[RMDB]
RNA sequence: GGGAACGACUCGAGUAGAGUCGAAAAGAGCGUCGAGAGACGAAGAGAAGUGCACCGAUCAGCAACGGCGAACGUAAUGGUGCACAAGAGUAAGUCAGUGUAACGUUCUCGGGGCACUGGAGGCAGAGGGUGCCUAUGAGUUCGCUCAUAGGCACCCAAAAGAAACAACAACAACAAC
Reactivity to 2A3 in 0.01 (KOAc 150mM, MgCl2 10mM, bicine 150mM(pH8.5), 24C), signal-to-noise 1, nucleotides 027 to 126: g010a010g000c020g030u020c020g020a000g000a000g000a160c030g000a020a020g040a000g090a170a010g000u040g000c000a000c000c060g000a070u140c040a080g070c010a050a070c030g160g030c080g080a010a050c050g000u110a000a220u130g030g000u010g010c000a000c040a010a030g060a000g050u140a100a010g040u010c030a000g050u020g000u140a020a060c000g020u110u000c000u050c040g030g080g020g000c020a000c000u000g000g050a000g080g000c040a000g080a010
Reactivity to DMS in 0.01 (KOAc 150mM, MgCl2 10mM, bicine 150mM(pH8.5), 24C), signal-to-noise 1, nucleotides 027 to 126: g010a040g080c000g000u000c000g000a160g010a230g000a000c000g000a050a000g000a130g070a000a170g000u000g000c040a020c000c000g020a050u070c120a170g000c200a150a030c160g000g000c030g010a110a100c000g010u050a120a040u020g000g040u000g000c020a000c030a000a080g000a050g000u000a040a080g060u030c000a040g040u000g010u050a030a010c030g000u000u000c050u000c000g060g000g060g020c010a010c000u030g020g000a000g020g000c140a090g000a210